An RNA of 177 nucleotides, treated with 2A3 and DMS and read out base by base. For DMS, 37,445 sequencing reads were counted. The reactions ran in a buffer of 150 mM KOAc, 10 mM MgCl2 and 150 mM bicine (pH 8.5), at 24 C. For DMS the reverse transcriptase was MarathonRT.
RNA sequence: GGGAACGACUCGAGUAGAGUCGAAAAACUAGUAUGUACACGAUGAGACUGCCGUGUCGUCUAGACUGCGGAUCCAAUAAUCUCAGAUCUGCGAGAUAUUGUCUCACGAGUACGAGACAAGUACUCAGUGCUAUGACUACUUCGGUGGUCGUAGCACAAAAGAAACAACAACAACAAC
Reactivity to 2A3 in 0.01 (KOAc 150mM, MgCl2 10mM, bicine 150mM(pH8.5), 24C), signal-to-noise 9, nucleotides 027 to 126: a000c010u020a020g070u080a040u120g050u060a010c010a000c020g100a160u080g010a020g050a050c050u060g090c060c010g010u020g020u010c000g010u000c030u040a030g020a110c030u050g010c020g040g000a010u010c040c040a080a070u230a140a090u080c060u010c060a030g020a140u000c010u030g020c020g030a020g010a020u110a040u040u080g000u000c000u000c000a020c010g030a020g030u040a020c020g010a000g020a020c040a040a020g020u020a030c010u010c040a010
Reactivity to DMS in 0.01 (KOAc 150mM, MgCl2 10mM, bicine 150mM(pH8.5), 24C), signal-to-noise 9, nucleotides 027 to 126: a100c010u000a050g010u030a040u020g000u020a000c010a080c010g010a140u010g000a050g000a070c060u010g010c050c010g000u010g000u000c000g000u010c100u050a020g010a210c060u020g010c110g010g000a020u010c100c190a100a110u040a020a070u030c100u010c080a080g000a050u010c040u010g000c040g000a030g000a060u010a040u010u010g000u000c000u000c000a070c010g010a070g010u010a020c050g010a090g000a050c120a040a060g000u000a070c020u010c030a180